[RMDB]
RNA sequence: GGGAACGACUCGAGUAGAGUCGAAAAGGGUUUGAGCCAUCGCCCGAAUAUGAUGGAUGAUACAAGUCGACAUUGUACGCGACGUAGUACGUACUCAUUAGUGCGAAAGCACGGUUAGUCCGACUAGGCAGGGACGAUCUUCUGUCAAUACUUAGAACCUACUAUCAUGGUUCGCCAUGAUAGUAGGAAAAGAAACAACAACAACAAC
Reactivity to DMS in 0.01 (KOAc 150mM, MgCl2 10mM, bicine 150mM(pH8.5), 24C), signal-to-noise 3, nucleotides 027 to 156: g020g030g000u000u010u010g020a090g030c050c110a140u010c050g010c020c020c010g010a070a090u000a030u000g010a020u000g000g000a140u000g020a140u000a070c180a080a160g000u000c010g020a080c040a110u010u020g030u000a060c070g000c020g010a110c060g010u000a100g020u000a040c060g020u000a050c000u000c110a090u000u000a100g050u020g030c000g020a150a130a160g020c000a000c000g000g000u000u000a130g010u000c010c020g020a120c070u000a080g000g030c020a090g000g000g010a060c030g010a060u010c060u000u010c050u000g000u000c030a060a090u000a070c020u010u010a070g000a080a250
Reactivity to 2A3 in 0.01 (KOAc 150mM, MgCl2 10mM, bicine 150mM(pH8.5), 24C), signal-to-noise 5, nucleotides 027 to 156: g070g000g020u080u110u100g080a040g040c010c010a030u070c020g000c010c010c000g030a050a050u190a100u070g010a000u040g010g020a040u070g020a020u050a130c110a160a050g000u020c020g030a050c080a120u040u260g070u150a030c090g000c020g020a030c030g010u000a000g020u030a110c010g000u000a010c000u020c020a040u010u060a100g000u010g010c020g040a100a020a010g000c030a000c000g000g010u000u020a010g010u000c040c000g000a010c030u030a030g050g000c030a030g050g000g000a030c060g020a070u020c000u120u030c020u030g060u040c000a070a040u120a110c080u080u140a040g040a070a020
Overview: An RNA of 207 nucleotides, treated with DMS and 2A3 and read out base by base. The reactions ran in a buffer of 150 mM KOAc, 10 mM MgCl2 and 150 mM bicine (pH 8.5), at 24 C. The data come from the RNA Mapping Database (RMDB), library OK3TST.